Description: Source: RMDB library OK1LIB, as collected in RNAgym. The record gives the reactivity of an RNA of 177 nucleotides to 2A3 and DMS. Reactivities are given for positions 27 through 126. For DMS the reverse transcriptase was MarathonRT. As a SHAPE reagent, 2A3 marks flexible, mostly unpaired nucleotides at the ribose 2'-OH. For DMS, 3,438 sequencing reads were counted.
[RMDB]
RNA sequence: GGGAACGACUCGAGUAGAGUCGAAAAUCAGCUAAUUUGAUGAUGACUAAAAAAUUAUUAUCACAAUACAAUCAUCCGAAAUAUAAACUAGAAUUAGUUAAAUUCAAUAAUUGGCCAGAUUUAAUGGCCACAGGGGAAUGUUCGCAUUCCCCUGUGGAAAAGAAACAACAACAACAAC
Reactivity to 2A3 in 0.01 (KOAc 150mM, MgCl2 10mM, bicine 150mM(pH8.5), 24C), signal-to-noise 4, nucleotides 027 to 126: u030c010a000g020c010u040a050a060u010u050u080g050a030u020g000a010u040g010a020c110u120a030a020a010a150a210a110u080u150a050u060u050a090u170c060a060c070a080a040u200a140c050a090a080u060c040a050u050c060c070g050a030a110a000u170a020u040a040a180a020c060u090a090g160a250a170u130u010a000g010u000u060a020a100a140u080u040c030a070a070u040a160a040u040u010g010g000c000c000a000g010a010u000u010u140a100a090u130g130g010
Reactivity to DMS in 0.01 (KOAc 150mM, MgCl2 10mM, bicine 150mM(pH8.5), 24C), signal-to-noise 3, nucleotides 027 to 126: u020c030a220g000c030u000a030a010u010u000u000g010a040u020g000a130u000g000a100c110u060a020a100a090a130a060a180u030u010a030u010u020a080u040c110a100c140a050a030u040a090c180a110a070u000c020a060u010c070c170g010a030a020a030u040a040u010a030a040a040c050u000a100g020a110a060u020u000a000g000u000u010a010a050a080u020u000c010a090a090u020a030a030u020u000g000g000c020c010a050g000a080u010u020u010a070a130u000g000g020